[RMDB]
RNA sequence: GGGAACGACUCGAGUAGAGUCGAAAAGAAGAGACCGCCACUAGGAGUCAGGGUUCAGACACGAUCCAAGAGAACACGGUCACACUGACUGUGCAGCGGAAGAGGCAAAGAGAGUGGCGGAAGAGAAACCCUCAUUUACCUUCGGGUAAAUGAGGGUAAAAGAAACAACAACAACAAC
Reactivity to DMS in 0.01 (KOAc 150mM, MgCl2 10mM, bicine 150mM(pH8.5), 24C), signal-to-noise 2, nucleotides 027 to 126: g000a100a200g030a140g010a100c000c000g000c020c000a000c000u000a110g010g010a100g010u000c040a090g000g000g000u000u090c140a080g010a040c000a000c030g000a080u000c010c010a140a100g010a240g000a030a040c040a010c000g000g000u000c000a070c090a070c000u000g020a010c000u010g020u000g010c070a060g050c070g020g020a110a080g020a020g010g060c060a080a110a100g010a080g000a020g000u000g020g000c010g020g010a050a010g000a080g000a100a100
Reactivity to 2A3 in 0.01 (KOAc 150mM, MgCl2 10mM, bicine 150mM(pH8.5), 24C), signal-to-noise 3, nucleotides 027 to 126: g080a060a030g070a000g060a030c010c010g030c000c000a010c020u030a050g150g040a030g070u000c010a000g040g010g000u080u240c090a010g060a040c020a000c140g020a010u000c030c010a170a020g130a010g000a040a010c070a010c030g030g000u000c000a000c000a020c050u030g000a010c000u050g080u070g090c040a020g000c000g070g050a060a020g060a080g060g000c040a020a090a020g120a050g000a040g070u010g000g030c020g000g010a040a000g030a010g000a020a050